Source: RMDB library OK3TST, as collected in RNAgym. This 207-nucleotide RNA was probed chemically with DMS and 2A3. The DMS profile rests on 7,403 reads.
RNA sequence: GGGAACGACUCGAGUAGAGUCGAAAAUCAUUGCCAUAUCAUGUUGAGAUAAGGACCACGAAUGGUACAGUAUUUAAGAAUGGUAUUGGUCGUUCUACUGUUAAACCAGUUUUGAAACAAGGCGAUAAAAUUGUUGAUGCAACCUAUCGAUUUGUGACAUAAGGGAUGCUUUCGAGCAUCCCUUAUGAAAAGAAACAACAACAACAAC
Reactivity to DMS in 0.01 (KOAc 150mM, MgCl2 10mM, bicine 150mM(pH8.5), 24C), signal-to-noise 4, nucleotides 027 to 156: u010c060a090u010u010g010c000c020a050u000a040u000c030a070u000g010u000u000g020a160g010a080u000a130a150g020g020a100c030c020a210c130g020a150a150u010g000g020u000a040c050a110g040u000a040u000u000u000a070a150g010a070a050u010g010g010u000a060u010u000g020g040u000c050g000u000u000c050u000a080c050u010g010u000u000a100a090a100c040c030a280g010u000u000u020u000g010a120a100a060c020a040a090g000g000c020g020a060u010a040a060a050a090u000u000g010u000u010g010a190u000g000c010a030a070c040c070u010a110u010c010g020a150u000u010u000g030u000g030a300
Reactivity to 2A3 in 0.01 (KOAc 150mM, MgCl2 10mM, bicine 150mM(pH8.5), 24C), signal-to-noise 3, nucleotides 027 to 156: u080c010a040u020u120g040c030c000a050u080a080u070c070a060u100g070u110u090g090a110g010a070u120a160a080g050g050a040c000c030a040c130g110a090a080u060g000g020u020a060c030a030g090u060a110u020u160u130a120a060g040a060a010u040g040g010u080a110u100u180g090g000u020c020g000u000u010c010u010a070c020u030g010u030u060a100a040a040c030c000a020g000u020u060u000u220g110a060a060a010c010a010a050g000g000c010g000a000u090a110a110a020a060u100u100g040u050u110g070a070u150g000c000a030a050c020c000u060a030u120c000g110a070u130u010u060g020u060g010a000
Values cover nucleotides 27 to 156. The RNA was probed in 150 mM KOAc, 10 mM MgCl2 and 150 mM bicine (pH 8.5) at 24 C. 2A3 adducts were read by reverse transcription with SuperScript II with manganese. The 2A3 profile rests on 1,654 reads. Values are in units of 0.01, from 0 to 300, in steps of 10.